[RMDB]
RNA sequence: GGGAACGACUCGAGUAGAGUCGAAAACUACUUCGAUGUCGUCUGUUCCUAUCCUGGUGCUGCAUAAGACACCAAGGGUGGGGCUGUUCGCCCAUUAAAAGGGAUCCUGAGAUGGGUUCACUACGUCCUCACCAGAAUUAUUCGUAAUUCUGGUGAGAAAAGAAACAACAACAACAAC
Reactivity to DMS in 0.01 (KOAc 150mM, MgCl2 10mM, bicine 150mM(pH8.5), 24C), signal-to-noise 6, nucleotides 027 to 126: c010u000a000c000u010u020c020g020a020u040g020u000c010g030u010c040u000g020u010u010c000c010u010a010u000c010c000u010g010g010u000g020c010u010g000c300a120u020a120a040g010a150c000a010c000c000a030a060g010g000g010u000g010g000g000g000c030u000g000u010u010c170g010c010c000c000a080u020u030a050a080a120a100g010g010g000a060u010c010c000u010g010a240g000a090u010g000g000g000u000u000c040a100c100u010a070c240g010u030c120
Reactivity to 2A3 in 0.01 (KOAc 150mM, MgCl2 10mM, bicine 150mM(pH8.5), 24C), signal-to-noise 9, nucleotides 027 to 126: c000u010a000c010u110u190c040g030a050u260g000u000c010g010u010c010u030g040u130u230c000c000u000a010u010c000c000u000g000g000u010g000c010u030g000c030a120u120a300a100g040a130c000a010c010c010a080a100g010g000g000u010g000g000g000g000c010u010g030u130u300c080g050c010c000c020a040u130u230a090a150a040a020g020g000g010a030u020c010c010u030g020a040g010a070u120g000g000g000u020u020c100a140c140u110a060c060g110u050c000
Structure probing data (DMS and 2A3) for a 177-nucleotide construct. The reactions ran in a buffer of 150 mM KOAc, 10 mM MgCl2 and 150 mM bicine (pH 8.5), at 24 C. For 2A3 the reverse transcriptase was SuperScript II with manganese.